The record gives the reactivity of an RNA of 177 nucleotides to 2A3 and DMS.
RNA sequence: GGGAACGACUCGAGUAGAGUCGAAAAAUGAAGUCGUCCGACAUAUUCUUUGCAUACCGUCUCACCCCCGUUGUUUUUAAGAGUCGACAGCAUGACAGCGGUGUGAACCAAUAUGGUUUGAAACCCACAUUACGAGCCUGUUCGCAGGCUCGUAAUGAAAAGAAACAACAACAACAAC
Reactivity to 2A3 in 0.01 (KOAc 150mM, MgCl2 10mM, bicine 150mM(pH8.5), 24C), signal-to-noise 2, nucleotides 027 to 126: a000u190g070a050a030g070u060c020g020u040c010c010g060a010c040a080u090a110u070u130c050u020u070u070g000c040a000u020a090c000c050g070u020c010u010c020a050c040c000c000c000c000g000u020u070g020u020u080u010u020u060a180a090g020a050g010u030c030g070a030c010a020g020c010a070u200g040a070c020a010g010c010g000g010u040g010u060g070a000a000c030c010a140a110u190a050u160g060g000u040u070u060g000a030a040a040c000c000c000a030
Reactivity to DMS in 0.01 (KOAc 150mM, MgCl2 10mM, bicine 150mM(pH8.5), 24C), signal-to-noise 2, nucleotides 027 to 126: a100u000g000a110a060g020u000c040g020u020c040c020g010a180c070a080u010a000u020u040c040u010u000u020g080c090a120u030a080c030c030g010u000c010u000c060a090c010c000c000c020c050g000u000u000g000u010u030u040u000u010a060a140g010a060g000u010c050g010a040c070a060g010c020a020u000g000a100c100a070g000c040g010g000u010g010u020g000a040a000c060c100a060a050u010a030u050g040g060u000u000u000g020a100a110a140c000c020c010a260

DMS adducts were read by reverse transcription with MarathonRT. For 2A3, 1,073 sequencing reads were counted. Conditions: 150 mM KOAc, 10 mM MgCl2 and 150 mM bicine (pH 8.5), 24 C.